[RMDB]
RNA sequence: GGGAACGACUCGAGUAGAGUCGAAAAAAUUAGGGUGUGAGAGUAUCUCUCUCCCAGCCGAUUCGCGCAGCCAUUUUUUUUGAUUUUAUUUGGGUUAGCUGCGCGAAUUGGCUGGCGUUCGCGCAAAAGGAUUAUUUAGGUUCGCCUAAAUAAUCCUAAAAGAAACAACAACAACAAC
Reactivity to DMS in 0.01 (KOAc 150mM, MgCl2 10mM, bicine 150mM(pH8.5), 24C), signal-to-noise 1, nucleotides 027 to 126: a070a070u000u020a070g000g010g020u000g010u000g000a030g010a060g010u010a110u010c090u010c010u010c010u000c030c010c000a010g010c000c010g010a020u000u000c010g000c000g020c000a020g030c010c080a010u010u000u000u000u000u010u010u010g020a110u030u000u000u010a070u010u010u000g010g010g010u010u020a090g020c010u000g010c000g020c020g010a020a000u000u000g010g040c010u010g000g010c040g020u000u000c020g010c050g020c180a060a060a090
Reactivity to 2A3 in 0.01 (KOAc 150mM, MgCl2 10mM, bicine 150mM(pH8.5), 24C), signal-to-noise 1, nucleotides 027 to 126: a000a000u250u160a080g030g000g030u060g000u030g070a010g020a010g040u230a250u090c080u010c000u000c000u010c140c000c020a000g000c000c020g000a020u030u000c020g010c000g000c000a000g060c050c020a020u040u060u080u130u000u060u080u220g090a080u120u150u050u210a140u090u120u120g080g000g050u030u110a060g070c000u000g000c000g030c000g000a000a000u000u020g000g040c000u000g000g000c000g000u040u060c050g000c010g000c080a040a070a070